Structure probing data (2A3) for a 207-nucleotide construct. It was measured as part of the RMDB library RSTRND.
RNA sequence: GGGAACGACUCGAGUAGAGUCGAAAAUCAGGCUAGCAGCCUAUUGUGUUUACUGGAUAGUCUGCGAAAUUAUUACAGUAAACUUGUUUUGAUCUGCCUGGCUAAGGGCUAGAAUCAAAAUAAGAUGUAAACUUAGCCUAAACCUGUAGAUACUUUGACUGUGUAUCGUCUUCGGACGAUACACAGUAAAAGAAACAACAACAACAAC
Reactivity to 2A3 in 0.01 (KOAc 150mM, MgCl2 10mM, bicine 150mM(pH8.5), 24C), signal-to-noise 1, nucleotides 027 to 156: u050c000a000g090g000c040u060a000g000c000a010g000c020c000u000a000u000u030g000u010g000u000u020u000a020c000u000g000g000a000u000a000g000u000c000u000g010c000g060a070a020a070u300u270a140u140u300a050c000a010g000u000a000a000a000c000u000u070g020u000u010u000u040g000a000u000c000u010g000c000c000u040g030g000c010u030a030a000g030g000g020c000u020a020g040a170a110u010c000a000a000a000a030u050a020a020g110a030u250g120u300a000a040a040c020u010u020a010g010c000c000u020a160a070a050c000c000u050g050u030a010g020a030u070a110c020u000u000u050g030